[RMDB]
RNA sequence: GGGAACGACUCGAGUAGAGUCGAAAAAAGCUCGCCGCGUGGCUGAAGAAGAACGAGACCGCCGAGCGGUCCGAGGAUGACGGCACGCCGGUGGAUCUGGACGAGCUCGAUGGUGAUGCGGUCGUCGGGGCCCUAAUUAGUUCGCUAAUUAGGGCCCAAAAGAAACAACAACAACAAC
Reactivity to DMS in 0.01 (KOAc 150mM, MgCl2 10mM, bicine 150mM(pH8.5), 24C), signal-to-noise 1, nucleotides 027 to 126: a100a040g000c060u000c010g000c080c040g040c040g030u030g020g060c000u010g040a150a090g010a130a040g010a190a080c000g000a060g000a030c040c000g090c010c080g000a000g030c000g010g030u000c010c000g010a030g000g000a260u070g010a120c000g000g020c100a050c060g000c010c000g000g020u000g000g020a120u010c000u000g000g000a030c130g000a090g000c010u010c030g000a130u000g000g000u000g040a080u010g020c000g000g000u010c080g080u060c070g000
Reactivity to 2A3 in 0.01 (KOAc 150mM, MgCl2 10mM, bicine 150mM(pH8.5), 24C), signal-to-noise 1, nucleotides 027 to 126: a000a000g060c010u080c060g020c000c000g050c000g110u130g040g000c050u090g000a110a070g010a030a000g000a060a000c010g030a000g010a080c010c010g000c010c060g000a010g000c000g010g020u000c000c000g000a000g050g060a040u170g060a000c000g030g000c020a030c080g050c010c040g070g000u020g000g020a090u000c010u000g040g040a180c030g000a020g030c010u000c010g080a090u050g000g080u020g080a100u040g000c020g010g010u100c030g000u050c010g000
This 177-nucleotide RNA was probed chemically with DMS and 2A3. It was measured as part of the RMDB library OK1LIB. DMS adducts were read by reverse transcription with MarathonRT.